[RMDB]
RNA sequence: GGGAACGACUCGAGUAGAGUCGAAAAGAUAUGGAGGCACCUUUUGACGGUCGACGUGUCGGAAACGACACCAAGACCGAUAAGGUGCUCCUAAGUCAAAACAUUGGCGACUUCGGUCGCCAAUGAACUAACUUAUCCUGUUCGCAGGAUAAGUUAGAAAAGAAACAACAACAACAAC
Reactivity to DMS in 0.01 (KOAc 150mM, MgCl2 10mM, bicine 150mM(pH8.5), 24C), signal-to-noise 6, nucleotides 027 to 126: g000a040u000a270u000g010g000a020g030g010c000a000c000c010u000u000u010u010g020a180c090g020g000u000c000g000a300c300g010u000g010u000c000g010g000a070a070a180c000g010a020c000a000c000c020a050a300g000a020c000c000g000a020u000a010a000g000g020u000g000c000u000c000c000u010a030a220g000u000c030a060a070a110a160c010a010u000u000g000g010c000g010a020c000u000u010c190g030g010u000c000g020c000c000a000a000u000g000a050a150
Reactivity to 2A3 in 0.01 (KOAc 150mM, MgCl2 10mM, bicine 150mM(pH8.5), 24C), signal-to-noise 4, nucleotides 027 to 126: g030a030u060a040u130g000g020a030g090g300c010a020c000c010u030u060u120u300g300a140c050g010g000u000c000g000a040c020g010u020g000u010c000g010g000a020a060a020c010g010a000c000a000c020c000a040a040g000a000c000c000g000a000u000a010a010g020g000u000g010c000u000c000c000u000a040a010g030u020c050a010a010a140a180c010a010u000u010g010g000c020g010a030c000u060u120c300g090g000u010c010g020c010c000a000a000u000g000a010a000